[RMDB]
RNA sequence: GGGAACGACUCGAGUAGAGUCGAAAAAACACUGGAUCGAAAUCGUCCACGGCGAUUGUCACCGCAAGCGGCGUACUCGCGUCAACACCGUCGACGAUGCUGAUGUCUUUCUGCUCCGGUGAACCAGUUGGGUGAAGAUACCACUCAACCGCGCCGCCUUGAAGUUCUUGUUCGCAAGAACUUCAAGAAAAGAAACAACAACAACAAC
Reactivity to 2A3 in 0.01 (KOAc 150mM, MgCl2 10mM, bicine 150mM(pH8.5), 24C), signal-to-noise 4, nucleotides 027 to 156: a000a000c040a010c020u030g010g000a020u070c110g070a100a090a100u030c010g000u000c040c040a000c020g010g000c060g150a240u050u060g050u110c040a040c100c060g000c020a030a030g020c020g010g000c010g010u080a080c060u050c100g030c030g040u040c000a010a030c010a030c020c000g030u040c020g000a020c000g010a020u060g020c100u140g030a130u100g100u050c070u030u100u030c040u090g020c010u000c020c010g010g000u010g010a030a040c030c010a020g000u000u000g020g000g000u010g030a110a040g100a190u160a190c060c000a000c000u000c010a010a010c050c020g020c010g000c020c010g000c000
Reactivity to DMS in 0.01 (KOAc 150mM, MgCl2 10mM, bicine 150mM(pH8.5), 24C), signal-to-noise 2, nucleotides 027 to 156: a030a040c040a070c010u000g000g000a070u000c070g010a080a050a040u000c040g010u000c010c050a020c040g000g000c000g020a150u010u000g010u030c030a120c110c010g060c070a060a090g020c040g010g040c070g040u010a160c050u000c040g010c070g050u000c010a060a040c020a020c020c000g040u000c120g050a100c070g000a050u000g030c050u160g020a090u000g000u000c090u010u010u000c030u000g010c100u000c050c010g000g000u000g000a030a040c060c000a040g010u000u010g000g030g040u000g020a140a120g010a250u000a160c070c010a000c020u010c000a020a010c000c030g020c070g070c020c010g010c020
This 207-nucleotide RNA was probed chemically with 2A3 and DMS. 2A3 is a SHAPE reagent: it acylates the 2'-hydroxyl of flexible nucleotides of all four kinds. DMS adducts were read by reverse transcription with MarathonRT.